[RMDB]
RNA sequence: GGGAACGACUCGAGUAGAGUCGAAAAGAUAUGGAUGUAUACAGCCGAUAAGUUGGUAUCGGAAACGAUACCCAACUUUUGACGGCUUAAUACAUCCUAAGUCAAAAUCGGACCUUCGGGUCCGAAAGAUUUGAUAGACCUUCGGGUCUAUCAAAUCAAAAGAAACAACAACAACAAC
Reactivity to DMS in 0.01 (KOAc 150mM, MgCl2 10mM, bicine 150mM(pH8.5), 24C), signal-to-noise 1, nucleotides 027 to 126: g000a050u000a250u050g000g000a020u000g000u000a000u010a130c300a030g000c020c000g020a180u000a000a000g020u000u010g000g020u000a000u000c000g010g010a030a040a050c000g010a030u000a010c260c050c050a000a000c000u000u010u010u000g000a190c140g030g000c000u010u000a130a050u010a000c000a000u010c030c010u000a010a110g010u000c010a110a070a110a190u000c000g020g000a020c000c000u010u010c250g030g000g040u010c010c010g010a000a030a030
Reactivity to 2A3 in 0.01 (KOAc 150mM, MgCl2 10mM, bicine 150mM(pH8.5), 24C), signal-to-noise 1, nucleotides 027 to 126: g000a000u060a040u090g010g000a000u020g010u000a020u000a030c130a020g000c030c120g300a160u150a300a000g000u000u030g040g000u030a010u010c000g040g090a000a020a000c000g000a000u000a040c000c010c020a010a000c000u070u180u050u110g240a160c240g000g000c000u000u010a010a010u000a020c010a000u000c000c000u000a030a020g030u040c020a000a030a000a300u060c010g000g010a020c000c000u040u070c300g200g000g030u000c000c000g000a000a000a000